[RMDB]
RNA sequence: GGGAACGACUCGAGUAGAGUCGAAAAGUAUAGAAGCAUGAGACCGCAUGCGAUAUACGAUGAAUCCCGGUCGAAUCCGUUGUGCGAAAGCACUUCGGUAAUGCAUAUCGGUAGGCAGAUCGGCCCGGAUCAGCUACCGUAAUUAGUACGGGCAAGAGACUAUCGUAUCGUUCGCGAUACGAUAGUCAAAAGAAACAACAACAACAAC
Reactivity to DMS in 0.01 (KOAc 150mM, MgCl2 10mM, bicine 150mM(pH8.5), 24C), signal-to-noise 2, nucleotides 027 to 156: g010u010a070u010a070g000a290a300g010c000a040u000g010a200g010a100c090c100g000c030a010u000g000c000g000a290u000a000u000a010c000g060a220u020g000a200a240u000c000c000c000g110g070u000c070g000a170a100u000c000c010g000u000u000g040u000g000c000g000a080a170a290g030c000a010c000u000u000c010g030g030u000a030a050u000g000c050a150u010a110u000c030g020g040u000a120g070g020c050a080g000a170u000c020g000g000c050c010c020g030g030a080u010c080a150g000c020u000a060c010c040g010u000a000a090u010u000a140g040u000a050c000g030g000g040c060a130a080g020a300
Reactivity to 2A3 in 0.01 (KOAc 150mM, MgCl2 10mM, bicine 150mM(pH8.5), 24C), signal-to-noise 4, nucleotides 027 to 156: g010u010a000u000a030g120a210a000g000c000a000u000g010a040g130a290c090c060g090c090a000u020g010c000g000a000u000a000u000a050c030g000a010u140g070a020a080u050c010c000c030g020g030u180c090g060a060a030u040c010c010g000u020u020g000u000g010c000g070a130a030a010g000c000a000c000u000u000c000g000g010u020a020a050u150g060c090a090u130a060u210c000g010g000u000a010g150g170c050a040g010a010u010c010g040g000c000c000c000g000g000a010u010c000a000g050c000u010a010c010c000g010u000a030a020u120u070a030g090u100a030c010g010g000g000c010a020a020g050a000
An RNA of 207 nucleotides, treated with DMS and 2A3 and read out base by base. The reactions ran in a buffer of 150 mM KOAc, 10 mM MgCl2 and 150 mM bicine (pH 8.5), at 24 C. It was measured as part of the RMDB library OK3TST. For DMS, 2,241 sequencing reads were counted.